[RMDB]
RNA sequence: GGGAACGACUCGAGUAGAGUCGAAAAACUACUCAUUAAAGCCAUGUAUAGACCUAAGAUGAUGGAAAGAUUGCUGAUGGAAGAACCGUAUCUACUUGUGAUGAGUGUUAUGUCACCAAGAGUGCUACCGGAGACUAACUUUCGAGUUAGUCUCCGGAAAAGAAACAACAACAACAAC
Reactivity to DMS in 0.01 (KOAc 150mM, MgCl2 10mM, bicine 150mM(pH8.5), 24C), signal-to-noise 1, nucleotides 027 to 126: a140c000u060a040c040u010c040a140u040u000a090a070a050g010c080c040a050u030g000u000a080u000a050g020a120c010c030u010a070a070g000a060u000g000a010u000g000g000a090a040a050g000a010u030u040g000c020u020g000a070u030g000g000a000a050g000a030a090c140c050g000u000a000u000c020u000a050c030u000u010g010u020g000a060u000g000a090g000u030g000u010u020a070u010g000u020c020a050c000c070a080a000g030a100g060u000g020c000u020a030
Reactivity to 2A3 in 0.01 (KOAc 150mM, MgCl2 10mM, bicine 150mM(pH8.5), 24C), signal-to-noise 3, nucleotides 027 to 126: a000c000u020a030c000u010c010a000u040u090a110a000a110g110c080c030a010u010g080u100a050u070a080g060a050c030c030u160a130a120g050a110u150g000a030u110g090g030a120a000a000g010a300u080u000g000c000u030g020a070u080g070g020a030a000g040a020a050c060c030g020u080a100u020c000u030a050c010u050u070g000u030g090a080u020g090a030g080u000g070u140u120a140u210g070u070c000a000c020c010a120a000g030a000g060u060g050c050u060a010
Source: RMDB library OK1LIB, as collected in RNAgym. The record gives the reactivity of an RNA of 177 nucleotides to DMS and 2A3. 2A3 adducts were read by reverse transcription with SuperScript II with manganese. For DMS the reverse transcriptase was MarathonRT.